Conditions: 150 mM KOAc, 10 mM MgCl2 and 150 mM bicine (pH 8.5), 24 C. Structure probing data (DMS and 2A3) for a 207-nucleotide construct. The DMS profile rests on 1,745 reads. Reactivities are given for positions 27 through 156.
[RMDB]
RNA sequence: GGGAACGACUCGAGUAGAGUCGAAAAGGGGUCUCACACUUGUGAGGUCAAGACAUGAGCUGAAGCCUCCACGGCUCAACAGCUUGACUACCCACCACAAGUGUGAGACGGAGGCACCCAAAACAUUUGUUAAAAGAUUCGUCUUUUAACAAAUGAAACCAAAGUGUUUGUUCGCAAACACUUUGGUAAAAGAAACAACAACAACAAC
Reactivity to DMS in 0.01 (KOAc 150mM, MgCl2 10mM, bicine 150mM(pH8.5), 24C), signal-to-noise 1, nucleotides 027 to 156: g050g020g000g060u000c010u000c020a020c020a010c000u020u070g000u020g020a300g000g010u010c040a010a000g010a130c060a300u020g020a020g020c000u000g010a120a180g000c010c000u010c050c010a300c090g040g030c010u000c000a100a060c040a110g000c000u000u010g000a040c020u000a040c020c010c020a300c110c020a050c020a020a080g000u000g030u000g000a010g010a020c000g030g020a020g000g000c020a120c000c000c000a020a090a100a300c010a020u000u000u000g000u000u000a010a020a020a020g050a070u000u020c300g010u000c000u000u000u000u000a000a010c010a000a000a000u000g000a000a140
Reactivity to 2A3 in 0.01 (KOAc 150mM, MgCl2 10mM, bicine 150mM(pH8.5), 24C), signal-to-noise 3, nucleotides 027 to 156: g040g010g000g000u010c000u000c000a000c000a000c000u000u000g010u000g010a040g000g030u010c000a000a000g030a040c110a190u280g010a000g000c010u020g030a110a000g030c000c000u000c010c010a020c020g020g000c010u000c010a050a040c070a010g130c000u010u000g000a000c000u060a090c090c090c090a050c040c000a000c010a000a000g000u000g000u000g000a000g000a000c010g000g000a000g000g020c000a020c000c000c000a050a090a040a040c010a000u010u010u010g010u000u000a010a010a010a000g010a030u030u150c250g040u030c110u020u010u000u000a000a000c000a000a000a010u010g000a110a000